[RMDB]
Notes: This 177-nucleotide RNA was probed chemically with DMS and 2A3. 2A3 adducts were read by reverse transcription with SuperScript II with manganese. For 2A3, 1,730 sequencing reads were counted. Source: RMDB library M2PK90, as collected in RNAgym. The DMS profile rests on 4,795 reads. The reactions ran in a buffer of 150 mM KOAc, 10 mM MgCl2 and 150 mM bicine (pH 8.5), at 24 C.
RNA sequence: GGGAACGACUCGAGUAGAGUCGAAAAACGAUGGCCGUAUAUCGGCCCAAAAGGUACGUCCGAGACUUGGACGUUAAUAGGCCCGGAGUGUAAGCGUAGAAAUACGUGGAGCUGAAAAUAAAACAAAUGUACAUCCUAUAUUCGUAUAGGAUGUACAAAAAGAAACAACAACAACAAC
Reactivity to DMS in 0.01 (KOAc 150mM, MgCl2 10mM, bicine 150mM(pH8.5), 24C), signal-to-noise 5, nucleotides 027 to 126: a160c130g010a120u010g010g010c000c000g020u000a150u000a090u000c000g020g020c010c000c120a020a030a060a090g000g010u000a030c020g010u010c000c000g010a170g020a140c250u000u030g000g010a000c010g010u000u000a040a100u010a060g010g020c050c000c010g000g010a050g030u000g000u000a300a130g000c010g020u000a010g000a110a070a170u000a010c000g020u000g000g000a300g000c010u000g000a050a040a040a050u010a060a060a060a070c200a050a070a090
Reactivity to 2A3 in 0.01 (KOAc 150mM, MgCl2 10mM, bicine 150mM(pH8.5), 24C), signal-to-noise 2, nucleotides 027 to 126: a010c080g010a110u140g000g020c030c010g040u050a110u020a040u300c030g000g000c000c000c000a040a060a000a000g080g030u040a000c000g020u000c000c020g060a070g070a130c080u120u110g000g010a000c000g020u030u040a080a020u070a080g050g010c060c000c000g100g120a020g010u040g030u060a030a020g000c000g000u000a000g020a050a040a010u010a020c000g000u010g030g000a000g000c000u040g030a050a070a010a030u230a010a130a020a030c090a010a140a040